[RMDB]
RNA sequence: GGGAACGACUCGAGUAGAGUCGAAAACUGCUCUCGUUCGCGAGAGCAGAAAUAAUAAAGGCUAGAAAACGAUCAAAACUAGCGAAAUACAUAACGAUCGAAAAAGAAGUCACUUCGGUGACUUCAAUCGUAAAGGAUGGUUCGCCAUCCUUUACGAAAAAGAAACAACAACAACAAC
Reactivity to 2A3 in 0.01 (KOAc 150mM, MgCl2 10mM, bicine 150mM(pH8.5), 24C), signal-to-noise 1, nucleotides 027 to 126: c000u000g000c000u000c000u000c010g010u020u110c170g020c050g160a000g010a010g010c000a000g010a000a000a000u000a010a000u060a020a190a010g140g000c000u010a010g050a080a130a000a020c000g010a050u000c020a000a000a040a130c040u000a010g000c000g010a100a070a000u230a070c070a060u150a130a050c070g000a000u020c000g000a000a110a040a000a040g000a000a000g000u010c000a000c010u050u070c260g130g000u030g000a000c000u010u000c000a000a000
Reactivity to DMS in 0.01 (KOAc 150mM, MgCl2 10mM, bicine 150mM(pH8.5), 24C), signal-to-noise 1, nucleotides 027 to 126: c000u000g000c000u000c000u040c000g030u030u010c170g020c020g030a000g000a030g030c020a000g000a000a090a020u000a140a080u000a050a060a110g030g020c000u000a000g000a070a000a030a080c000g000a010u000c000a130a120a100a030c000u000a000g010c000g010a080a140a180u010a030c170a090u030a110a160c300g000a010u000c000g000a120a080a060a120a110g000a000a030g000u000c000a000c000u020u000c170g010g000u000g000a000c000u000u000c020a000a070